The data come from the RNA Mapping Database (RMDB), library OK3TST. Chemical mapping of a 207-nucleotide RNA with 2A3 and DMS. 2A3 adducts were read by reverse transcription with SuperScript II with manganese. For DMS, 5,624 sequencing reads were counted. For DMS the reverse transcriptase was MarathonRT. Values cover nucleotides 27 to 156.
[RMDB]
RNA sequence: GGGAACGACUCGAGUAGAGUCGAAAAGGCAAAACAAGGUGGGUCCGUUUGGGUUGUUUGAAACAAUCCCAUGGCGUGCAGUUUGUUCAUCACAUUUUUCCCCAUGGGGGUGUUCGUGCGUGUAAGCAAAAAGCUUCCCACUGUGGAAUCCUGCACCGGUGAUUAUAGUUUUCGAACUAUAAUCACCAAAAGAAACAACAACAACAAC
Reactivity to 2A3 in 0.01 (KOAc 150mM, MgCl2 10mM, bicine 150mM(pH8.5), 24C), signal-to-noise 3, nucleotides 027 to 156: g070g010c030a040a040a040a040c040a080a030g080g000u030g020g000g000u030c040c030g000u010u070u070g010g000g010u010u000g040u060u070u210g140a100a050a020c010a000a040u060c000c010c010a020u030g020g010c070g040u070g010c010a020g000u060u130u110g030u080u130c070a080u110c020a030c000a040u090u060u020u160u100c010c000c000c000a030u040g020g020g000g020g010u030g010u060u050c060g030u000g040c030g000u090g090u160a020a040g020c030a030a100a130a050a010g010c000u040u020c030c000c000a030c050u080g020u090g060g030a040a040u060c010c020u060g020c030a020c100c050
Reactivity to DMS in 0.01 (KOAc 150mM, MgCl2 10mM, bicine 150mM(pH8.5), 24C), signal-to-noise 2, nucleotides 027 to 156: g020g020c030a070a080a080a070c070a060a080g000g000u000g010g040g010u020c070c040g030u010u000u000g010g000g010u010u000g000u010u000u000g020a170a090a090c020a040a060u010c010c000c030a100u010g030g010c070g010u000g030c060a080g010u010u000u010g010u010u020c090a110u020c150a070c010a120u000u000u000u000u020c020c010c010c030a110u000g010g040g050g000g010u000g010u000u000c070g020u030g010c040g000u000g020u010a050a070g030c050a080a080a060a050a110g010c040u000u000c000c000c010a080c070u010g040u010g010g020a100a110u000c050c000u000g000c010a090c090c060